[RMDB]
RNA sequence: GGGAACGACUCGAGUAGAGUCGAAAAUUCAACGACCGCGGCGCCUGCCUGGCGGGUGUGGUGAUCGACGACGGGCUACGGCCCAAGGUGGUGCAACUGUCCACCGGUGCGUGGUUCGAUCCCGCCGCAAAUCCGAGAGAUUCGUCUCUCGGAUUUGAAAAGAAACAACAACAACAAC
Reactivity to 2A3 in 0.01 (KOAc 150mM, MgCl2 10mM, bicine 150mM(pH8.5), 24C), signal-to-noise 1, nucleotides 027 to 126: u030u010c040a090a010c050g030a000c000c060g020c010g080g010c030g050c020c020u070g030c030c080u090g170g000c000g000g070g000u070g020u000g120g000u040g080a100u000c020g040a050c010g000a010c010g000g000g050c010u030a010c060g140g000c010c000c000a000a000g010g000u040g060g000u070g070c060a240a180c180u260g000u000c010c000a000c000c040g000g030u150g040c030g030u060g010g010u000u000c010g000a020u020c020c000c020g060c030c010g100
Reactivity to DMS in 0.01 (KOAc 150mM, MgCl2 10mM, bicine 150mM(pH8.5), 24C), signal-to-noise 2, nucleotides 027 to 126: u010u000c040a080a300c040g020a000c060c030g050c010g000g000c000g020c010c030u000g020c000c090u020g020g020c010g030g010g030u020g060u010g010g060u000g000a020u000c020g010a070c300g010a090c070g000g000g000c010u010a060c060g040g000c000c010c130a050a010g040g010u000g010g010u000g020c140a160a060c230u020g010u010c010c000a020c000c020g010g020u010g020c040g010u000g000g010u000u000c040g010a090u010c010c010c010g030c130c150g000